RNA sequence: GGGAACGACUCGAGUAGAGUCGAAAACUGACAGAGCUUGCAGAGAAGGGCCUUGCCCCACAGGUGCACCCACCGCUGAUUUCCAUGCGUGACUUUGAGAAGGUGCUGCUCAGAGCGCGGCCGACCGCAAUCAACGCUGUUUCGACAGCGUUGAUUGAAAAGAAACAACAACAACAAC
Reactivity to 2A3 in 0.01 (KOAc 150mM, MgCl2 10mM, bicine 150mM(pH8.5), 24C), signal-to-noise 2, nucleotides 027 to 126: c020u030g050a010c020a060g060a020g090c050u100u090g010c030a010g030a010g040a150a110g040g010g010c040c020u030u160g040c000c000c030c010a040c010a020g050g030u030g020c030a040c030c010c000a040c030c040g020c020u050g030a150u070u070u000c030c040a030u140g040c030g040u070g050a120c010u090u020u050g060a040g030a030a040g000g030u040g040c040u010g030c000u030c020a050g000a000g000c030g000c000g020g000c000c000g030a070c030c050g010
Reactivity to DMS in 0.01 (KOAc 150mM, MgCl2 10mM, bicine 150mM(pH8.5), 24C), signal-to-noise 3, nucleotides 027 to 126: c090u000g010a070c110a110g000a110g020c050u000u020g030c030a050g020a110g000a120a110g000g000g000c020c100u000u010g000c030c010c050c060a070c080a050g020g020u010g010c030a070c030c030c050a110c050c060g010c040u000g000a130u000u000u000c040c020a060u000g000c050g020u010g010a100c040u000u000u000g010a080g020a050a080g020g000u000g010c030u000g010c000u000c030a070g000a020g000c060g000c040g020g030c050c030g000a090c040c070g000
The record gives the reactivity of an RNA of 177 nucleotides to 2A3 and DMS. The RNA was probed in 150 mM KOAc, 10 mM MgCl2 and 150 mM bicine (pH 8.5) at 24 C.